[RMDB]
RNA sequence: GGGAACGACUCGAGUAGAGUCGAAAACCCGGGCCUUCUUCGCCGGGGGCGCCCCUUCUCCGUCCCUAUCCUUCUUUCCGAUUAUUCCUUUGAUGUUCCCCAGCCAGGGAUUUUCAUCCUCGAGCUUGCCCCGCUGAGUUCGCUCAGCGGAAAAGAAACAACAACAACAAC
Reactivity to DMS in 0.01 (KOAc 150mM, MgCl2 10mM, bicine 150mM(pH8.5), 24C), signal-to-noise 5, nucleotides 027 to 129: c000c040c030g040g030g050c040c040u030u040c040u020u010c120g040c110c050g030g030g000g030g030c050g020c100c000c000c020u000u030c040u000c080c040g040u020c030c030c020u000a000u030c040c030u000u040c060u020u010u030c000c060g040a070u030u090a190u010u000c010c020u020u050u020g050a130u010g040u010u020c010c010c000c020a060g030c050c060a090g000g000g000a000u000u000u020u020c120a080u010c030c010u000c080g040a120g030c020u030u030g020c040c070
Reactivity to 2A3 in 0.01 (KOAc 150mM, MgCl2 10mM, bicine 150mM(pH8.5), 24C), signal-to-noise 7, nucleotides 027 to 129: c000c000c000g000g040g000c040c000u120u080c010u100u130c070g050c030c000g000g000g010g020g000c050g040c000c010c010c000u060u010c030u020c000c000g050u050c020c000c020u040a120u070c000c000u040u040c000u000u000u010c020c020g030a050u020u060a050u100u080c030c000u070u080u180g110a120u110g030u030u020c010c000c000c000a000g010c010c010a030g000g030g000a020u070u080u060u060c050a040u040c010c000u010c020g010a020g030c010u050u130g040c010c000

The data come from the RNA Mapping Database (RMDB), library 15KLIB. Chemical mapping of a 170-nucleotide RNA with DMS and 2A3. The reactions ran in a buffer of 150 mM KOAc, 10 mM MgCl2 and 150 mM bicine (pH 8.5), at 24 C. The DMS profile rests on 24,082 reads. The 2A3 profile rests on 13,459 reads. 2A3 adducts were read by reverse transcription with SuperScript II with manganese.